[RMDB]
RNA sequence: GGGAACGACUCGAGUAGAGUCGAAAAGAUAUGGAUCGUUGAGGAGCGAUAAGAACGUGUCGGAAACGACAUAGUUCUUUUGACGCUCGUAGACGAUCCUAAGUCAAAAGCGAGCUUCGGCUCGCAAGAAACUGAAAAGCUUCGGCUUUUCAGUUUCAAAAGAAACAACAACAACAAC
Reactivity to DMS in 0.01 (KOAc 150mM, MgCl2 10mM, bicine 150mM(pH8.5), 24C), signal-to-noise 1, nucleotides 027 to 126: g030a070u010a300u010g000g000a010u000c000g010u010u000g030a300g040g030a010g020c000g000a160u010a010a010g010a000a000c020g000u000g010u000c000g010g010a210a080a300c010g000a040c000a000u000a100g020u000u010c000u000u000u000u000g040a250c080g020c010u000c010g000u010a300g000a000c010g040a010u010c010c010u000a030a040g000u000c060a070a110a080a170g000c000g030a000g020c010u010u010c260g060g000c000u000c000g060c000a020a040
Structure probing data (DMS) for a 177-nucleotide construct. The RNA was probed in 150 mM KOAc, 10 mM MgCl2 and 150 mM bicine (pH 8.5) at 24 C. The DMS profile rests on 961 reads. Source: RMDB library TTRDES, as collected in RNAgym.